[RMDB]
RNA sequence: GGGAACGACUCGAGUAGAGUCGAAAAAUCUAUGAAGUCACCUUCCUCAAACGCUGGUUCGUUCCGGACGAUGUUAGACCCAUCUACAUUCACCCUGUGAUGGACCCCGACACGUACGAGCAAUCGGGUAUAUCUGGGAAUUCGUUCCCAGAUAUACAAAAGAAACAACAACAACAAC
Reactivity to 2A3 in 0.01 (KOAc 150mM, MgCl2 10mM, bicine 150mM(pH8.5), 24C), signal-to-noise 4, nucleotides 027 to 126: a000u050c050u050a080u130g100a080a020g040u040c010a020c040c000u020u030c010c000u060c020a110a080a030c090g020c070u060g040g020u050u030c060g020u080u000c090c020g010g010a020c020g100a170u050g020u030u040a050g020a070c020c020c000a010u000c040u110a010c020a040u050u130c020a060c020c020c020u020g010u020g040a020u020g030g020a040c100c060c010c000g010a010c000a010c040g040u060a030c010g000a010g020c030a030a020u050c020g020g030
Reactivity to DMS in 0.01 (KOAc 150mM, MgCl2 10mM, bicine 150mM(pH8.5), 24C), signal-to-noise 6, nucleotides 027 to 126: a090u010c050u000a070u010g010a130a080g000u000c020a040c040c060u000u010c020c020u010c120a090a080a100c210g010c030u000g010g020u000u010c080g020u000u000c080c030g010g010a050c060g010a080u000g000u000u010a060g000a230c110c030c010a040u000c020u010a030c030a060u010u000c190a090c110c120c160u010g010u000g000a040u000g010g010a080c040c040c050c020g010a030c040a030c050g010u000a050c060g010a040g010c100a050a060u000c030g010g010